[RMDB]
RNA sequence: GGGAACGACUCGAGUAGAGUCGAAAAAUGGAACUGGGAGAGGAUUCACUCAGAUGUGUUAAUUGUUACGAUGUUUGGAAAGAACCGAGUGAUUUAUCAAAACAAGAAACAUGGAAAUAUUUUGUCAAUGACAAGUUUUAUUCGUAAAACUUGUCAUAAAAGAAACAACAACAACAAC
Reactivity to 2A3 in 0.01 (KOAc 150mM, MgCl2 10mM, bicine 150mM(pH8.5), 24C), signal-to-noise 2, nucleotides 027 to 126: a000u030g010g000a000a080c050u080g000g000g050a060g000a010g060g070a130u100u080c020a020c070u040c030a020g070a210u120g070u010g010u040u070a070a030u100u030g020u030u030a050c090g030a040u060g080u050u040u050g110g050a190a200a050g050a080a060c020c040g000a050g020u070g050a040u060u100u090a050u020c000a020a140a000a040c020a030a050g070a110a070a020c020a010u030g010g080a090a160a010u140a080u030u220u140u180g050u090c040a040
Reactivity to DMS in 0.01 (KOAc 150mM, MgCl2 10mM, bicine 150mM(pH8.5), 24C), signal-to-noise 5, nucleotides 027 to 126: a050u000g000g010a110a100c080u000g030g000g010a080g020a080g020g000a130u010u000c050a060c050u000c040a070g010a210u010g000u000g000u000u000a070a140u010u000g000u000u000a100c280g010a090u000g010u000u010u010g010g000a090a120a150g000a050a080c040c060g010a110g020u020g000a060u000u010u000a060u010c060a070a190a030a020c050a020a040g000a220a040a040c050a010u000g000g010a080a070a110u010a080u000u000u010u000g010u000c100a090